[RMDB]
RNA sequence: GGGAACGACUCGAGUAGAGUCGAAAAUAUUACAUCUUCGGAUGUAAUAACUGGUGGUGGCUGGCUUGUUGCUAGUGGCGCAAGUGUUGCCAUGACUGCGCAAUCGCUCUGAAUUCGUUCAGAGCAACAGUUAACUUCUUUUCGAAGAAGUUAACUGAAAAGAAACAACAACAACAAC
Reactivity to DMS in 0.01 (KOAc 150mM, MgCl2 10mM, bicine 150mM(pH8.5), 24C), signal-to-noise 7, nucleotides 027 to 126: u000a010u000u000a000c000a000u000c000u000u010c190g020g000a010u000g000u000a010a000u000a030a120c110u000g020g020u010g010g050u000g010g000c010u000g010g010c030u000u000g010u000u010g040c010u000a120g010u010g020g010c010g010c010a030a040g010u000g010u000u000g010c010c030a030u000g000a040c040u010g010c160g010c190a100a090u020c150g000c000u000c000u000g000a020a030u000u000c190g020u000u000c000a010g010a010g020c000a030a040
Reactivity to 2A3 in 0.01 (KOAc 150mM, MgCl2 10mM, bicine 150mM(pH8.5), 24C), signal-to-noise 8, nucleotides 027 to 126: u030a000u000u000a000c000a010u000c000u020u040c210g130g010a000u010g000u010a000a000u010a020a040c090u110g040g000u020g050g020u010g020g000c020u010g080g010c010u020u030g020u050u240g020c030u060a150g200u150g300g000c000g010c000a020a010g010u040g110u190u090g010c010c000a010u030g110a020c010u050g010c100g000c130a050a120u110c120g000c000u000c000u000g010a020a020u070u060c160g050u080u000c030a000g000a000g000c000a000a000
The data come from the RNA Mapping Database (RMDB), library M2PK50. The record gives the reactivity of an RNA of 177 nucleotides to DMS and 2A3. DMS adducts were read by reverse transcription with MarathonRT. 2A3 adducts were read by reverse transcription with SuperScript II with manganese. The reactions ran in a buffer of 150 mM KOAc, 10 mM MgCl2 and 150 mM bicine (pH 8.5), at 24 C. In probing experiments dimethyl sulfate is read out at A N1 and C N3, which are open when not base-paired. For DMS, 14,181 sequencing reads were counted.